[RMDB]
RNA sequence: GGGAACGACUCGAGUAGAGUCGAAAACGUGAGAGCUUAUUUCCAGGCUCGGUCCACCAUUCAGCGAGUCAAGGAACUGGACUUCCUUAUCCUUCGCGUGUCUCAUAUAUCCAACGAGGCAUUCGAACUAUGGUUCAGGCUUCGGCCUGAACCAUAGAAAAGAAACAACAACAACAAC
Reactivity to 2A3 in 0.01 (KOAc 150mM, MgCl2 10mM, bicine 150mM(pH8.5), 24C), signal-to-noise 1, nucleotides 027 to 126: c080g030u080g050a110g020a020g020c010u110u070a030u190u120u000c150c060a050g010g000c010u000c060g000g040u000c010c040a040c000c000a120u160u190c060a030g130c020g060a060g050u030c040a080a090g060g000a000a070c080u090g070g120a090c000u080u040c000c000u050u050a130u260c040c000u000u060c020g010c020g020u020g000u000c000u020c030a070u150a060u050a110u250c070c100a100a050c190g020a000g010g040c020a010u050u060c000g000a050a020
Reactivity to DMS in 0.01 (KOAc 150mM, MgCl2 10mM, bicine 150mM(pH8.5), 24C), signal-to-noise 1, nucleotides 027 to 126: c280g000u000g000a130g000a020g000c000u000u010a070u000u000u000c050c040a060g010g010c010u000c040g000g020u000c110c070a060c120c140a070u000u010c140a120g060c020g000a030g000u010c030a120a150g000g000a030a010c140u000g000g000a120c140u000u000c040c040u000u000a100u010c050c040u000u000c000g000c060g000u000g030u000c000u020c020a070u020a100u000a070u040c120c170a080a150c150g000a030g010g000c000a070u000u000c010g000a020a050
This 177-nucleotide RNA was probed chemically with 2A3 and DMS. The DMS profile rests on 919 reads. For 2A3 the reverse transcriptase was SuperScript II with manganese. For DMS the reverse transcriptase was MarathonRT.